[RMDB]
RNA sequence: GGGAACGACUCGAGUAGAGUCGAAAAAGCUGCGCGGAACCCUCCGCUAUGGGAGGGCGGAGAGGAGGGGCUAUUGGCGAGGGUUGCCGUUCCUGUCGCGCUAUGAUGUGGUCGUAGCAGAUUUACAACGGUAUAUUUUAUUCGUAAAAUAUACCGUAAAAGAAACAACAACAACAAC
Reactivity to 2A3 in 0.01 (KOAc 150mM, MgCl2 10mM, bicine 150mM(pH8.5), 24C), signal-to-noise 4, nucleotides 027 to 126: a010g040c050u070g010c040g000c030g040g020a040a050c010c010c000u040c060c060g020c030u030a070u100g080g030g050a160g060g040g000c090g020g010a120g000a040g050g070a070g020g020g010g010c060u070a080u130u170g020g000c040g010a030g020g000g020u050u110g070c000c010g020u010u020c010c010u040g040u060c030g000c000g000c030u020a070u110g110a050u080g100u160g180g070u030c010g000u000a010g000c020a020g010a100u130u130u070a090c060a070
Reactivity to DMS in 0.01 (KOAc 150mM, MgCl2 10mM, bicine 150mM(pH8.5), 24C), signal-to-noise 5, nucleotides 027 to 126: a120g010c090u010g020c070g020c040g010g010a120a120c030c010c000u000c020c030g020c090u010a070u010g000g000g000a090g010g000g000c080g000g000a140g010a100g000g010a100g010g000g000g020c130u010a060u010u000g000g010c040g000a070g020g010g000u000u000g020c030c000g010u010u000c010c000u000g010u000c030g000c070g000c020u000a030u010g010a070u010g020u010g010g010u000c010g020u000a050g000c030a120g000a080u000u010u010a070c180a110

The record gives the reactivity of an RNA of 177 nucleotides to 2A3 and DMS. The reactions ran in a buffer of 150 mM KOAc, 10 mM MgCl2 and 150 mM bicine (pH 8.5), at 24 C. DMS adducts were read by reverse transcription with MarathonRT. DMS (dimethyl sulfate) methylates the pairing face of unpaired adenines and cytosines. For 2A3 the reverse transcriptase was SuperScript II with manganese. Values cover nucleotides 27 to 126.